Chemical mapping of a 177-nucleotide RNA with DMS and 2A3.
Reactivities are given for positions 27 through 126.
It was measured as part of the RMDB library OK2TRN.

[RMDB]
RNA sequence: GGGAACGACUCGAGUAGAGUCGAAAAGUGACAAGUAUAACACCAGCAGUGGUUACAAGGUACCCCUGGAGCUGAAAAAGCAAUAGAUUCUCUCUAGGGAAGUCGGGAAAUUGUCCUGGAAGAGAAACGUUUAACACCUUUUCGAAGGUGUUAAACGAAAAGAAACAACAACAACAAC
Reactivity to DMS in 0.01 (KOAc 150mM, MgCl2 10mM, bicine 150mM(pH8.5), 24C), signal-to-noise 3, nucleotides 027 to 126: g020u000g000a050c020a070a120g010u000a090u000a160a100c100a020c020c030a020g030c130a070g000u000g010g020u000u000a100c060a140a110g020g010u000a100c050c000c010c000u000g000g010a100g000c110u000g010a040a070a120a140a110g000c140a090a140u000a120g000a240u000u010c000u000c010u000c010u000a030g010g010g010a050a050g000u010c060g000g000g000a070a090a110u010u010g000u000c010c000u000g010g000a060a060g010a060g000a020a040a180
Reactivity to 2A3 in 0.01 (KOAc 150mM, MgCl2 10mM, bicine 150mM(pH8.5), 24C), signal-to-noise 2, nucleotides 027 to 126: g090u080g030a030c010a020a040g020u070a100u050a300a030c040a010c040c000a000g030c020a040g100u010g020g040u060u060a010c020a070a060g140g000u040a060c000c000c000c000u000g020g020a030g020c090u020g060a050a020a050a040a040g070c000a020a010u070a120g060a030u040u000c000u000c000u000c000u000a010g020g000g010a020a030g080u060c060g090g000g000a020a100a110u070u060g040u040c000c010u020g010g030a090a040g030a040g020a090a060a030